[RMDB]
RNA sequence: GGGAACGACUCGAGUAGAGUCGAAAACGAUGCGCCAUGCGAGAUCGCAGCGCCUAGCGCUGGUAGCAAACGGACGGGGCGAUGUGCCGGUCUCGUCACUCAUCAAAGAUCUCCCGCCGAAUUGAUUGCGCCGAUGAGCGAAUGGGAGACCGUCUCGCAACUCGUCGGGUUUCGACCCGACGAGUUGAAAAGAAACAACAACAACAAC
Reactivity to 2A3 in 0.01 (KOAc 150mM, MgCl2 10mM, bicine 150mM(pH8.5), 24C), signal-to-noise 2, nucleotides 027 to 156: c060g020a000u070g000c020g010c070c030a080u130g010c030g000a060g000a000u060c050g020c010a020g000c010g010c010c070u190a170g090c030g000c030u070g070g000u140a140g050c130a210a140a050c060g050g020a020c030g040g030g040g000c030g020a080u130g040u070g230c070c040g000g000u000c000u000c050g030u010c070a040c060u040c000a050u000c010a050a100a020g100a080u050c040u060c020c000c000g000c030c050g070a060a110u170u120g160a260u120u080g010c000g020c030c040g190a220u150g070a140g010c000g050a040a090u170g040g010g010a020g000a040c010c000g010u010c020u010c030g000

The record gives the reactivity of an RNA of 207 nucleotides to 2A3. Source: RMDB library OK3TST, as collected in RNAgym. Conditions: 150 mM KOAc, 10 mM MgCl2 and 150 mM bicine (pH 8.5), 24 C.